[RMDB]
RNA sequence: GGGAACGACUCGAGUAGAGUCGAAAACUAUUUUCAAUAACUCCUAAUAGAGCACGGCGGAAAUGUGCCAUCAUAUAAUUUCCUAAUACAGCACCAGUCGGACGUGAUGCUCCUUUUCCAAGCAUCCUCUACAUGACAAAUUCGUUUGUCAUGUAGAAAAAGAAACAACAACAACAAC
Reactivity to DMS in 0.01 (KOAc 150mM, MgCl2 10mM, bicine 150mM(pH8.5), 24C), signal-to-noise 6, nucleotides 027 to 126: c090u010a070u010u000u010u010c080a120a120u000a120a150c070u000c010c010u000a090a090u010a130g000a110g010c050a030c090g010g020c080g010g000a040a050a060u010g010u000g010c050c040a060u000c090a050u000a060u010a060a070u000u000u000c020c010u000a050a080u010a080c090a080g010c040a030c020c040a060g010u000c070g010g000a050c100g000u000g000a030u010g010c010u000c040c030u000u000u000u000c020c080a100a070g010c060a050u000c040c130
Reactivity to 2A3 in 0.01 (KOAc 150mM, MgCl2 10mM, bicine 150mM(pH8.5), 24C), signal-to-noise 6, nucleotides 027 to 126: c030u050a120u080u100u060u100c090a130a090u070a180a050c020u030c020c000u090a140a110u090a140g040a010g020c030a010c050g040g000c050g070g060a040a080a040u080g030u060g030c030c000a050u050c040a010u100a010u050a170a110u040u050u040c010c000u040a080a040u110a130c050a020g030c010a020c010c000a020g070u080c030g060g000a050c050g030u090g010a010u020g010c010u040c020c000u050u060u020u020c010c010a020a020g000c010a040u030c000c030